Structure probing data (2A3 and DMS) for a 177-nucleotide construct. The 2A3 profile rests on 16,370 reads. Values cover nucleotides 27 to 126. Reactivities are rounded to 0.1 and cut off at 0 and 3. For DMS, 24,845 sequencing reads were counted. Source: RMDB library OK2TST, as collected in RNAgym.

[RMDB]
RNA sequence: GGGAACGACUCGAGUAGAGUCGAAAAGAUCGCAACAACAGCGUGUUCGCGUUCGUCCGUCGCGACGAUGCGGGCCGCAUGCUCGUCGCGGUGUGCAACUUCACGCCGGUGCCGCGCACCGACUAUAUAAUCAUAUUAAUUUCGAUUAAUAUGAUUAAAAAGAAACAACAACAACAAC
Reactivity to 2A3 in 0.01 (KOAc 150mM, MgCl2 10mM, bicine 150mM(pH8.5), 24C), signal-to-noise 7, nucleotides 027 to 126: g060a060u080c030g020c040a020a030c010a020a020c020a070g030c020g050u200g030u110u020c020g000c040g050u060u060c010g000u010c010c010g280u140c110g070c230g010a000c000g000a010u080g000c000g000g020g000c010c010g000c000a010u020g000c010u030c050g040u020c030g000c020g000g020u060g030u040g030c050a140a080c040u130u110c070a020c070g020c030c010g050g030u020g010c040c130g130c030g000c060a010c010c010g030a020c020u010a020u040a040
Reactivity to DMS in 0.01 (KOAc 150mM, MgCl2 10mM, bicine 150mM(pH8.5), 24C), signal-to-noise 9, nucleotides 027 to 126: g000a050u000c020g020c010a050a030c020a040a070c060a070g000c030g010u010g010u000u000c050g020c040g020u000u010c020g020u000c010c020g010u010c270g010c140g000a020c000g010a020u000g010c000g010g000g010c020c030g010c010a030u000g020c030u000c120g020u000c030g010c020g020g010u000g010u000g010c130a080a100c130u000u000c080a080c110g010c020c010g010g020u000g010c040c190g020c200g000c030a040c020c010g010a040c040u010a300u010a150